An RNA of 207 nucleotides, treated with DMS and 2A3 and read out base by base. It was measured as part of the RMDB library M2RFPK. The 2A3 profile rests on 6,447 reads. The RNA was probed in 150 mM KOAc, 10 mM MgCl2 and 150 mM bicine (pH 8.5) at 24 C.

RNA sequence: GGGAACGACUCGAGUAGAGUCGAAAAGCGAAAGUUGCCAUGAGACCGUAACUUUCGUAUUCAUUGAUAAAGGGGCAGGUCUCGCUCUUUUGUCAUUGCGGUUGCCUAGAGGCAUGGUCGUUUACCGAAAAGAGCUCAUUCUUCGGAAUGAGCUCAAGCUGAAAUACUAGUUCGCUAGUAUUUCAGCAAAAGAAACAACAACAACAAC
Reactivity to DMS in 0.01 (KOAc 150mM, MgCl2 10mM, bicine 150mM(pH8.5), 24C), signal-to-noise 2, nucleotides 027 to 156: g000c010g000a010a020a050g020u010u010g000c020c020a200u020g010a090g000a080c090c070g050u000a020a010c000u010u010u020c010g070u000a040u000u000c070a120u010u000g010a020u000a010a020a040g050g030g000g000c000a120g000g020u000c130u000c090g000c080u000c000u020u000u000u010g010u000c000a060u020u000g010c070g010g000u010u000g000c010c050u010a090g000a190g050g020c020a070u010g010g040u000c020g010u000u000u010a130c040c050g010a040a050a120a160g030a020g010c010u010c000a020u000u000c000u000u000c290g050g000a030a000u030g010a020g030c010u000c000a000a070
Reactivity to 2A3 in 0.01 (KOAc 150mM, MgCl2 10mM, bicine 150mM(pH8.5), 24C), signal-to-noise 5, nucleotides 027 to 156: g030c000g000a000a000a000g010u010u010g010c030c020a120u160g100a060g020a190c040c050g000u010a000a000c000u000u000u000c000g000u000a010u000u090c010a000u000u050g020a000u010a010a010a010g000g010g000g010c030a030g020g200u080c080u060c110g000c000u000c000u000u000u000u010g020u010c000a010u020u060g030c040g100g020u060u070g040c010c020u120a110g040a180g120g000c040a050u100g020g000u010c010g010u010u020u040a300c010c010g000a060a060a030a040g010a000g000c000u010c000a000u000u010c000u020u040c110g100g000a000a000u000g000a010g020c000u000c000a000a000